[RMDB]
RNA sequence: GGGAACGACUCGAGUAGAGUCGAAAAAGUGUUAUUCAUGACUCUCGCCACGUUCAGCCACGUCUGCUUGGUUUGGAGCACUCCUGUACCAUGGGGUGUCGUUUGACUGUACAAAACAUCAGUGACACCCCUUCAUGCACUUCGGUGCAUGAAGGGGAAAAGAAACAACAACAACAAC
Reactivity to 2A3 in 0.01 (KOAc 150mM, MgCl2 10mM, bicine 150mM(pH8.5), 24C), signal-to-noise 1, nucleotides 027 to 126: a010g070u090g060u090u170a280u270u190c120a090u300g030a020c000u020c000u000c140g030c000c000a210c040g030u120u030c000a000g070c000c000a000c000g000u040c070u010g070c000u040u060g080g080u140u020u160g090g010a000g000c000a000c000u000c000c000u130g030u210a100c000c000a000u010g000g000g000g000u000g020u070c000g000u140u050u030g000a120c080u000g000u180a020c110a040a050a000a070c000a070u090c070a050g000u000g000a000c000a140
Reactivity to DMS in 0.01 (KOAc 150mM, MgCl2 10mM, bicine 150mM(pH8.5), 24C), signal-to-noise 1, nucleotides 027 to 126: a170g000u000g010u020u000a060u000u140c270a070u010g000a110c000u080c000u000c300g000c030c160a080c010g080u000u010c000a010g030c070c020a090c090g000u000c070u000g010c000u010u000g000g050u000u000u000g220g040a000g150c120a170c130u010c000c000u000g040u100a130c190c200a130u000g070g000g000g000u000g000u050c040g000u000u000u000g000a010c300u000g030u000a230c300a060a180a020a110c120a030u000c090a010g030u020g000a000c000a000

Structure probing data (2A3 and DMS) for a 177-nucleotide construct. Reactivities are rounded to 0.1 and cut off at 0 and 3. The DMS profile rests on 954 reads. Reactivities are given for positions 27 through 126. The RNA was probed in 150 mM KOAc, 10 mM MgCl2 and 150 mM bicine (pH 8.5) at 24 C. For 2A3 the reverse transcriptase was SuperScript II with manganese.